[RMDB]
RNA sequence: GGGAACGACUCGAGUAGAGUCGAAAACCACGCAAACUGCCUUGACGCUGCCGGCAGGACGCGUAGAAUCUGGACCGUCGGGGGCUGCAAGGUUCCCGAUAAUGGUUGUGAACCUUCUUCUUGAAGGUUAAAUAUUUCACUUCGGUGAAAUAUUUAAAAAAGAAACAACAACAACAAC
Reactivity to DMS in 0.01 (KOAc 150mM, MgCl2 10mM, bicine 150mM(pH8.5), 24C), signal-to-noise 9, nucleotides 027 to 126: c000c010a080c040g020c020a050a230a280c010u000g010c010c010u010u030g020a100c070g010c090u010g020c050c130g000g000c040a020g010g010a150c300g010c010g010u010a080g010a120a070u030c110u010g000g000a060c040c040g010u000c000g000g000g010g000g000c000u000g000c270a100a100g010g000u000u000c000c000c000g000a010u010a030a080u020g010g010u000u000g000u010g010a070a050c000c000u000u000c000u010u040c190u030u020g000a010a000g000g000
Reactivity to 2A3 in 0.01 (KOAc 150mM, MgCl2 10mM, bicine 150mM(pH8.5), 24C), signal-to-noise 7, nucleotides 027 to 126: c000c000a020c010g020c010a160a170a110c010u010g000c010c000u100u220g060a070c070g040c110u150g050c040c010g010g000c010a010g000g030a010c050g020c000g010u010a030g100a020a070u100c100u130g080g050a020c010c040g000u000c000g000g000g010g000g020c000u040g030c040a060a060g060g000u030u010c010c000c000g000a000u020a000a040u090g040g010u020u030g080u030g070a010a010c000c000u010u020c000u160u020c050u120u300g020a000a000g000g000
An RNA of 177 nucleotides, treated with DMS and 2A3 and read out base by base.
The data come from the RNA Mapping Database (RMDB), libraries RFM100 and RFMREP.
The reactions ran in a buffer of 150 mM KOAc, 10 mM MgCl2 and 150 mM bicine (pH 8.5), at 24 C.